[RMDB]
RNA sequence: GGGAACGACUCGAGUAGAGUCGAAAAAAGUCACCCUCCUCGCAUUGCAAGUUCGUGCUUGCGACUUACACGUAGGGCGAGGGGUGGGCGAAAGUUGCCAUGAGACCGUAACUUUCGUAGUCAUUGAAAAACUACAAAGCCUUCGGGCUUUGUAGAACCAACUGCAAUAGUUCGCUAUUGCAGUUGGAAAAGAAACAACAACAACAAC
Reactivity to 2A3 in 0.01 (KOAc 150mM, MgCl2 10mM, bicine 150mM(pH8.5), 24C), signal-to-noise 6, nucleotides 027 to 156: a000a000g150u100c050a070c010c000c000u030c010c000u010c000g000c010a040u060u070g010c010a020a010g010u120u210c120g120u300g110c050u060u080g010c000g010a010c020u060u100a060c100a040c120g170u150a120g040g130g000c010g010a010g010g000g000g020u150g010g010g000c000g000a000a000a000g000u000u000g010c020c020a030u080g070a050g020a270c020c020g010u010a000a000c000u000u010u000c010g000u010a040g080u030c050a070u060u100g020a050a040a020a020a030c000u010a000c000a000a000a000g000c010c000u060u080c240g050g000g000c000u000u000u000g000u000a000g000a000a000
Reactivity to DMS in 0.01 (KOAc 150mM, MgCl2 10mM, bicine 150mM(pH8.5), 24C), signal-to-noise 2, nucleotides 027 to 156: a040a070g010u010c000a040c020c000c000u010c000c000u000c030g080c090a240u010u000g010c000a030a040g010u020u010c090g050u010g000c140u000u000g020c010g000a070c040u000u010a050c020a080c130g030u010a090g020g060g030c030g020a030g000g030g000g000u000g010g000g050c030g000a030a030a060g010u000u000g000c000c030a260u000g020a160g010a120c130c080g010u000a020a020c010u000u010u000c040g050u000a130g010u000c060a150u000u010g000a100a050a050a060a170c010u000a030c000a020a030a000g010c000c000u000u010c260g070g010g010c010u000u000u000g040u000a000g000a040a120